The record gives the reactivity of an RNA of 177 nucleotides to 2A3 and DMS.
For DMS the reverse transcriptase was MarathonRT.
[RMDB]
RNA sequence: GGGAACGACUCGAGUAGAGUCGAAAAACUGCGGCUGCGCAAGCUCGACGCGCGCACUCUUGUCUGCUUACGAGGGCUCCUCCCUUCAGCUUUGGUCCCUCGGGGCGUCUGGGCAGCCUACGCUUUCAAGUAAUUAAGCUUUCGAGCUUAAUUACUUAAAAGAAACAACAACAACAAC
Reactivity to 2A3 in 0.01 (KOAc 150mM, MgCl2 10mM, bicine 150mM(pH8.5), 24C), signal-to-noise 9, nucleotides 027 to 126: a000c040u080g020c010g040g000c030u060g000c110g010c080a060a030g020c030u060c070g050a050c040g020c000g000c010g010c040a040c030u090c040u080u150g060u080c050u090g030c010u070u070a130c020g010a020g010g020g010c060u060c020c010u070c010c020c000u080u160c060a080g030c010u090u090u120g020g010u050c000c000c000u010c000g010g000g010g000c010g030u020c040u080g010g050g000c010a010g020c000c010u050a060c060g020c010u010u020u050c030
Reactivity to DMS in 0.01 (KOAc 150mM, MgCl2 10mM, bicine 150mM(pH8.5), 24C), signal-to-noise 7, nucleotides 027 to 126: a120c070u010g010c090g000g010c050u000g010c020g010c040a090a130g010c060u010c120g010a070c080g010c110g010c120g020c040a050c080u010c080u020u010g000u010c050u020g020c030u010u010a110c050g010a040g000g000g000c090u010c020c030u010c020c010c020u010u020c090a090g010c070u000u010u010g010g000u010c000c010c000u000c030g010g000g000g000c010g000u010c040u010g000g000g020c020a070g000c010c010u010a090c150g010c030u000u000u000c040